[RMDB]
RNA sequence: GGGAACGACUCGAGUAGAGUCGAAAAGGUGAACUGGACGGGAAGUAGAUCCAGCGACUGCAUCCGAAGCUUUGAUAAGAGCAACUCCAUCUACGUUGCUCAAGUAGGUGGUAGCAGCAAACACCGAGACCUACGUCCAUUUCGAUGGACGUAGGUCAAAAGAAACAACAACAACAAC
Reactivity to DMS in 0.01 (KOAc 150mM, MgCl2 10mM, bicine 150mM(pH8.5), 24C), signal-to-noise 2, nucleotides 027 to 126: g000g000u010g000a110a100c060u000g000g120a110c300g010g000g030a020a060g000u030a030g000a050u000c010c000a070g020c190g000a160c000u000g040c000a200u000c000c040g000a300a290g000c020u000u020u000g000a080u070a110a200g010a000g000c030a010a000c000u000c200c070a110u000c200u000a130c130g000u000u020g000c110u000c000a030a000g000u000a040g000g020u120g000g020u000a170g030c070a030g000c120a040a090a260c000a030c030c010g000a150
Reactivity to 2A3 in 0.01 (KOAc 150mM, MgCl2 10mM, bicine 150mM(pH8.5), 24C), signal-to-noise 3, nucleotides 027 to 126: g030g010u000g040a040a010c020u010g040g000a000c000g090g040g120a170a100g070u210a040g020a210u000c000c000a000g000c000g010a130c000u000g000c000a010u020c020c050g020a150a000g000c010u090u130u170g290a230u220a140a070g000a010g000c060a040a000c050u020c030c010a130u020c020u100a010c060g070u070u010g070c000u030c080a010a010g000u000a000g000g040u150g050g030u080a070g000c000a000g000c000a000a100a000c010a010c020c040g040a030

The record gives the reactivity of an RNA of 177 nucleotides to DMS and 2A3. The data come from the RNA Mapping Database (RMDB), library OK1LIB. Reactivities are given for positions 27 through 126. The RNA was probed in 150 mM KOAc, 10 mM MgCl2 and 150 mM bicine (pH 8.5) at 24 C. The 2A3 profile rests on 1,537 reads. For 2A3 the reverse transcriptase was SuperScript II with manganese. For DMS, 1,436 sequencing reads were counted. In probing experiments dimethyl sulfate is read out at A N1 and C N3, which are open when not base-paired.